An RNA of 207 nucleotides, treated with DMS and 2A3 and read out base by base. The DMS profile rests on 2,599 reads.

RNA sequence: GGGAACGACUCGAGUAGAGUCGAAAAAUGGCGAAUGCAUGGGGAACUACAUCUGUGUCGCGAGUUCGAUUCUCGCCAGGGCCUGGUCCUGUAGCUCAGUUGGUAGAGUAAGCUGUUCCCCGGACACAAAAUCCAGCUAGGUUCGCCUAGCUGGAAAGGAUAUUAUGAGCUUCGGCUCAUAAUAUCCAAAAGAAACAACAACAACAAC
Reactivity to DMS in 0.01 (KOAc 150mM, MgCl2 10mM, bicine 150mM(pH8.5), 24C), signal-to-noise 2, nucleotides 027 to 156: a070u010g030g030c030g000a060a080u010g000c020a170u020g010g010g010g000a100a080c010u000a030c060a080u000c120u000g000u000g010u000c020g030c060g020a030g030u010u000c060g030a300u000u000c000u000c020g000c040c030a130g000g010g030c010c070u000g020g030u000c010c000u000g030u000a090g030c010u000c010a090g000u000u010g020g040u000a130g030a030g010u000a080a160g000c030u000g000u000u000c000c000c030c080g020g030a080c040a080c060a090a050a090a140u010c010c010a010g000c000u000a010g030g000u000u010c300g030c050c000u010a010g000c000u000g000g000a000a000a040
Reactivity to 2A3 in 0.01 (KOAc 150mM, MgCl2 10mM, bicine 150mM(pH8.5), 24C), signal-to-noise 3, nucleotides 027 to 156: a000u110g060g000c070g080a110a050u120g040c090a080u100g010g000g000g000a020a060c030u110a050c110a070u050c080u050g050u040g090u130c040g010c000g010a000g000u050u040c060g020a070u100u010c010u000c000g000c010c000a010g020g000g000c050c220u170g060g090u040c010c010u030g040u100a030g010c010u010c030a040g020u120u100g130g040u070a010g020a050g090u040a070a030g030c090u030g060u000u010c000c000c000c000g030g010a040c030a000c020a060a160a000a000u030c000c000a000g000c000u000a000g010g000u050u040c050g010c020c000u000a000g000c010u000g000g000a030a000a000